The record gives the reactivity of an RNA of 177 nucleotides to 2A3 and DMS.
The 2A3 profile rests on 5,043 reads.
In probing experiments dimethyl sulfate is read out at A N1 and C N3, which are open when not base-paired.
The RNA was probed in 150 mM KOAc, 10 mM MgCl2 and 150 mM bicine (pH 8.5) at 24 C.
2A3 adducts were read by reverse transcription with SuperScript II with manganese.

RNA sequence: GGGAACGACUCGAGUAGAGUCGAAAAUCUUGACAGACCGGGCCUUAGAUCACGUAACGGGAAGACAGGUGAUCGGCACACUGGACGAAGUGAACGAUAAGGACCUGUGUCAGUAGAAGAGGUGGAAUCUCUGGUGCUCGUUCGCGAGUACCAGAGAAAAAGAAACAACAACAACAAC
Reactivity to 2A3 in 0.01 (KOAc 150mM, MgCl2 10mM, bicine 150mM(pH8.5), 24C), signal-to-noise 4, nucleotides 027 to 126: u030c010u010u090g060a030c010a010g030a010c000c010g000g040g000c000c000u040u050a060g010a050u070c030a010c100g040u030a100a010c030g000g000g040a030a030g060a030c030a010g000g040u010g010a110u100c020g160g020c040a000c000a020c010u030g010g050a040c040g020a070a020g010u000g030a060a050c030g050a050u020a050a010g040g050a160c000c010u070g030u090g000u090c010a000g020u050a030g020a170a010g010a000g020g040u070g030g070a090a090
Reactivity to DMS in 0.01 (KOAc 150mM, MgCl2 10mM, bicine 150mM(pH8.5), 24C), signal-to-noise 5, nucleotides 027 to 126: u000c000u000u010g010a060c060a070g000a030c020c010g000g010g000c010c030u000u020a030g020a090u010c090a050c040g030u020a200a130c030g000g020g020a130a110g010a060c050a060g010g010u000g010a190u080c110g000g040c070a060c020a040c020u000g020g020a100c060g000a100a100g000u000g000a060a120c110g010a300u010a020a050g000g000a120c000c010u010g010u030g030u000c010a060g020u000a030g000a050a030g030a030g000g030u010g000g010a110a060